[RMDB]
RNA sequence: GGGAACGACUCGAGUAGAGUCGAAAAUGCAUUGCAAGUGAUGACAAAAUCAAGGCUUGUUUCUCGACAUUCGCAGUUGCCGCCUAAGAGCUUUCGCCCUGCCAGGCUUGAGAGGUAGUGCUGCCAACUUAGUGAUUCUGUUCGCAGAAUCACUAAGAAAAGAAACAACAACAACAAC
Reactivity to DMS in 0.01 (KOAc 150mM, MgCl2 10mM, bicine 150mM(pH8.5), 24C), signal-to-noise 3, nucleotides 027 to 126: u040g020c140a090u000u000g000c020a030a050g020u000g010a270u010g000a060c080a070a100a060a300u000c000a040a070g000g000c050u020u000g000u000u000u000c010u000c030g010a110c210a110u010u000c200g030c030a020g000u000u010g030c020c010g000c010c010u020a060a300g000a020g000c010u000u000u000c140g020c030c050c060u000g030c050c090a060g010g000c020u000u000g000a130g000a030g000g020u000a040g010u000g020c010u000g010c010c190a040a150
Reactivity to 2A3 in 0.01 (KOAc 150mM, MgCl2 10mM, bicine 150mM(pH8.5), 24C), signal-to-noise 2, nucleotides 027 to 126: u110g030c030a040u020u060g000c010a060a000g040u050g070a070u020g020a060c040a060a160a010a040u020c030a020a040g150g000c000u020u010g030u030u050u000c020u020c020g030a060c040a210u170u120c070g010c010a020g020u150u230g090c000c010g000c010c000u040a040a010g010a000g020c000u040u060u120c100g000c080c040c010u030g020c020c010a040g030g000c000u020u000g080a170g000a010g040g000u010a020g000u020g020c020u010g000c010c000a060a050